An RNA of 207 nucleotides, treated with 2A3 and read out base by base.
It was measured as part of the RMDB library M2RFPK.
For 2A3 the reverse transcriptase was SuperScript II with manganese.

RNA sequence: GGGAACGACUCGAGUAGAGUCGAAAAACUGAUACAUUACGAGGUAUCAGAAUGACUUCGUGGUAGAGCGCCACGAACGGAAAAUAAAGAAAGCUCGAUUGAAACGCACCGUGUACGCACGGUGCGAAAAAGUCGAUCCAGUUCGCUGGAUCGACAAGACUGAUCAUACGUUCGCGUAUGAUCAGUCAAAAGAAACAACAACAACAAC
Reactivity to 2A3 in 0.01 (KOAc 150mM, MgCl2 10mM, bicine 150mM(pH8.5), 24C), signal-to-noise 2, nucleotides 027 to 156: a000c010u000g000a000u020a000c000a040u190u290a130c150g130a150g070g140u000a000u000c000a000g100a030a090u150g060a030c020u000u000c020g010u000g020g000u030a110g010a000g030c020g000c000c030a000c000g010a000a000c010g060g020a060a040a000a000u090a010a020a020g110a050a030a000g010c020u010c000g100a130u050u220g100a160a090a010c000g000c020a010c000c020g030u030g090u100a030c210g000c040a000c020g050g010u000g010c000g000a000a000a000a000a000g000u000c000g010a000u000c010c010a000g060u070u080c130g070c120u030g010g000a020u000c000g000a000c010a000a000